[RMDB]
RNA sequence: GGGAACGACUCGAGUAGAGUCGAAAAGUAGUGCGCAAAUCGAUCAGAAAGCUCACGUACCGCACUUUUCUAAGCUACAACCUUUUGUAGCCGUAAGUGUAUCGCCAAACUCUUCCGUCGAUUUUUCUGAAGCUUCAGAAGAAAGCUCUCAAUCUCCGACUUUGUAUGUGUUCGCACAUACAAAGUCAAAAGAAACAACAACAACAAC
Reactivity to 2A3 in 0.01 (KOAc 150mM, MgCl2 10mM, bicine 150mM(pH8.5), 24C), signal-to-noise 5, nucleotides 027 to 156: g090u090a000g010u010g030c030g000c050a010a050a070u040c030g070a070u120c040a050g060a090a080a010g020c020u040c040a030c030g020u050a030c020c040g000c020a010c000u020u050u110u040c040u110a050a010g000c000u000a000c010a040a080c060c060u140u300u150u050g000u000a000g000c000c000g020u020a010a000g000u010g020u040a060u090c030g030c040c010a050a070a120c030u040c010u080u020c040c020g030u020c020g050a070u000u040u010u100u040c030u060g040a110a050g030c040u100u060c020a040g030a100a020g030a080a110a010g010c010u010c010u010c030a090a150u020c030u050c090c060
Reactivity to DMS in 0.01 (KOAc 150mM, MgCl2 10mM, bicine 150mM(pH8.5), 24C), signal-to-noise 2, nucleotides 027 to 156: g010u030a100g000u010g010c060g020c070a030a050a030u000c010g020a080u010c040a070g010a110a090a060g000c020u000c180a120c060g000u000a130c040c160g000c010a020c020u000u000u020u000c070u000a110a040g010c010u000a040c000a010a130c200c180u010u000u000u010g040u000a010g030c010c020g020u000a020a040g010u000g020u000a080u000c040g010c020c030a080a070a030c000u010c040u010u000c030c030g000u000c030g000a070u010u020u010u000u010c040u010g020a050a090g010c020u000u010c010a140g030a130a160g030a030a020a040g000c000u000c020u000c020a070a160u010c020u000c050c300